RNA sequence: GGGAACGACUCGAGUAGAGUCGAAAAUCAGGUCACUUCGGUGACCUGAAAACAAGGAACCAAAAGGAAAACCUAACCAAGGAAUAUGCAAACCAAAAUAAAAAACCAUAGCCUUCGGGCUAUGGAACGUAAAUGUGAUGUUCGCAUCACAUUUACGAAAAGAAACAACAACAACAAC
Reactivity to DMS in 0.01 (KOAc 150mM, MgCl2 10mM, bicine 150mM(pH8.5), 24C), signal-to-noise 1, nucleotides 027 to 126: u000c000a000g000g050u000c000a000c030u000u020c180g070g010u000g010a010c010c010u000g010a000a040a030a130c260a040a120g010g010a160a190c030c030a060a060a060a050g000g000a090a030a070a090c020c000u010a060a060c090c030a070a060g020g000a130a050u000a070u000g040c060a110a040a140c010c050a030a030a050a110u010a000a100a030a060a070a060c000c000a010u010a000g000c000c000u000u000c250g020g040g020c010u020a000u000g000g010a010a030
Reactivity to 2A3 in 0.01 (KOAc 150mM, MgCl2 10mM, bicine 150mM(pH8.5), 24C), signal-to-noise 3, nucleotides 027 to 126: u010c000a000g020g010u000c010a000c010u020u090c190g110g000u020g000a000c010c000u000g000a000a000a000a000c030a020a080g040g020a020a050c040c000a110a080a010a130g070g010a070a040a030a050c010c030u020a040a050c030c010a000a090g050g010a090a100u140a050u240g060c070a060a040a070c030c020a060a080a110a040u190a040a150a030a000a020a020c000c000a000u010a000g000c000c000u030u090c300g060g000g000c000u000a000u000g000g000a000a000
Chemical mapping of a 177-nucleotide RNA with DMS and 2A3.
The reactions ran in a buffer of 150 mM KOAc, 10 mM MgCl2 and 150 mM bicine (pH 8.5), at 24 C.
For 2A3 the reverse transcriptase was SuperScript II with manganese.